The record gives the reactivity of an RNA of 177 nucleotides to 2A3 and DMS. For DMS, 3,932 sequencing reads were counted. DMS (dimethyl sulfate) methylates the pairing face of unpaired adenines and cytosines. DMS adducts were read by reverse transcription with MarathonRT. For 2A3 the reverse transcriptase was SuperScript II with manganese.
RNA sequence: GGGAACGACUCGAGUAGAGUCGAAAAUGCGGCGGGCGAUCUCUUUGUAGCUGUAGUAGGUCAUCAGGCGGACGGGCGUCGAUAUAUCCCGCAGGCGAUAGCGCAAGGUGUGGCUGCCAUUAUUGCAACACUAGCAGUUUUUCGAAACUGCUAGUGUAAAAGAAACAACAACAACAAC
Reactivity to 2A3 in 0.01 (KOAc 150mM, MgCl2 10mM, bicine 150mM(pH8.5), 24C), signal-to-noise 2, nucleotides 027 to 126: u120g010c040g000g030c040g000g040g000c020g070a080u020c040u000c000u160u090u110g080u130a020g010c030u020g020u050a050g040u030a020g090g030u030c030a090u010c020a040g050g000c020g030g010a020c020g030g030g030c000g010u060c010g000a010u030a020u000a050u160c020c020c000g000c010a050g000g020c000g060a060u100a060g040c070g000c030a020a050g000g010u080g020u030g070g000c010u000g000c010c010a090u110u100a120u130u170g050c030a040
Reactivity to DMS in 0.01 (KOAc 150mM, MgCl2 10mM, bicine 150mM(pH8.5), 24C), signal-to-noise 3, nucleotides 027 to 126: u010g000c050g010g010c060g010g020g020c040g000a050u010c030u000c060u010u000u000g010u000a080g010c020u000g000u010a080g010u000a080g020g000u000c060a080u010c080a080g010g020c040g010g020a110c070g010g000g000c060g010u000c040g010a070u000a070u010a130u010c010c020c020g030c130a040g010g020c060g000a080u000a050g010c060g010c070a040a040g010g020u000g010u000g010g020c030u000g010c050c040a060u010u000a070u000u010g020c100a160